[RMDB]
The record gives the reactivity of an RNA of 177 nucleotides to 2A3 and DMS.

RNA sequence: GGGAACGACUCGAGUAGAGUCGAAAAUUGUCCGUAAGGUUACGUGCUAUCUGGGUUUACUGGAUCACUACGCAAUUUGACCGCAGUGAUCCGCAGCUUUACUGGAUCUCUUCGCAACUUGACCAGACGGUAGCGUGAGAUUCGUCUCACGCUACCGAAAAGAAACAACAACAACAAC
Reactivity to 2A3 in 0.01 (KOAc 150mM, MgCl2 10mM, bicine 150mM(pH8.5), 24C), signal-to-noise 3, nucleotides 027 to 126: u170u140g090u000c000c010g040u030a080a000g000g050u060u100a050c050g000u080g080c060u020a050u030c030u060g090g000g040u050u110u010a210c070u070g010g000a020u020c000a000c020u060a010c000g010c010a110a150u110u170u300g130a120c050c000g000c000a000g000u000g000a000u000c000c010g020c000a010g000c040u090u020u120a090c070u100g070g000a090u010c050u000c030u100u070c080g020c020a070a130c050u100u100g040a070c000c010a030g010a020
Reactivity to DMS in 0.01 (KOAc 150mM, MgCl2 10mM, bicine 150mM(pH8.5), 24C), signal-to-noise 2, nucleotides 027 to 126: u020u010g010u000c000c030g010u060a000a020g020g040u000u000a010c210g060u000g030c090u000a000u000c000u000g000g000g010u070u000u020a130c150u060g050g000a000u000c000a000c000u020a020c000g020c030a300a150u090u000u040g030a210c300c020g060c000a000g010u000g030a030u000c000c000g040c210a110g020c150u000u040u000a070c090u080g020g000a000u000c050u010c080u000u000c060g010c060a030a040c030u120u030g000a180c080c060a090g000a300
Notes: For 2A3, 1,746 sequencing reads were counted. As a SHAPE reagent, 2A3 marks flexible, mostly unpaired nucleotides at the ribose 2'-OH. The data come from the RNA Mapping Database (RMDB), library OK1LIB.